[RMDB]
An RNA of 207 nucleotides, treated with DMS and 2A3 and read out base by base. Values cover nucleotides 27 to 156. For 2A3, 1,180 sequencing reads were counted. The data come from the RNA Mapping Database (RMDB), library M2RFPK. The RNA was probed in 150 mM KOAc, 10 mM MgCl2 and 150 mM bicine (pH 8.5) at 24 C.
RNA sequence: GGGAACGACUCGAGUAGAGUCGAAAAAUAGAUACUGACACCGGUUGCUCAACAGGCUGUGUGGGACAAUAGAAUAACAAGGCUGUCAAUUUGAGCUUGACGGCUGCAAACCGAAUGGAGUGAAAUCGUAACCGGACUCACUUCGGUGAGUCCGGAACUGAUAAUUCUGAUUCGUCAGAAUUAUCAGAAAAGAAACAACAACAACAAC
Reactivity to DMS in 0.01 (KOAc 150mM, MgCl2 10mM, bicine 150mM(pH8.5), 24C), signal-to-noise 1, nucleotides 027 to 156: a090u000a040g000a140u000a090c060u000g000a110c010a080c030c050g000g030u000u000g020c060u000c060a090a140c090a090g010g030c070u000g020u010g030u010g040g030g040a040c050a080a110u000a100g020a090a110u000a070a110c050a090a130g010g000c000u010g000u000c010a040a040u010u010u000g000a180g000c300u000u000g000a050c020g020g050c020u000g000c030a030a050a060c020c010g000a080a130u020g000g000a090g050u020g010a060a110a110u000c050g010u000a120a130c010c010g010g010a030c000u000c000a020c020u000u000c300g030g000u000g010a040g010u000c000c020g020g000a000a020
Reactivity to 2A3 in 0.01 (KOAc 150mM, MgCl2 10mM, bicine 150mM(pH8.5), 24C), signal-to-noise 2, nucleotides 027 to 156: a010u090a040g070a030u070a080c030u050g020a030c010a030c090c050g110g000u110u100g040c020u010c090a090a050c010a130g070g050c020u020g060u010g020u050g130g010g000a030c040a070a070u100a110g090a070a070u120a110a040c070a120a060g040g000c000u000g000u000c000a010a000u030u070u260g060a050g020c000u020u000g000a020c000g020g000c030u040g030c030a040a060a060c060c020g020a030a100u140g020g040a030g050u090g070a040a070a050u110c030g030u080a070a050c000c000g000g000a000c010u000c010a010c000u030u070c090g040g010u010g020a000g010u000c000c010g000g000a000a000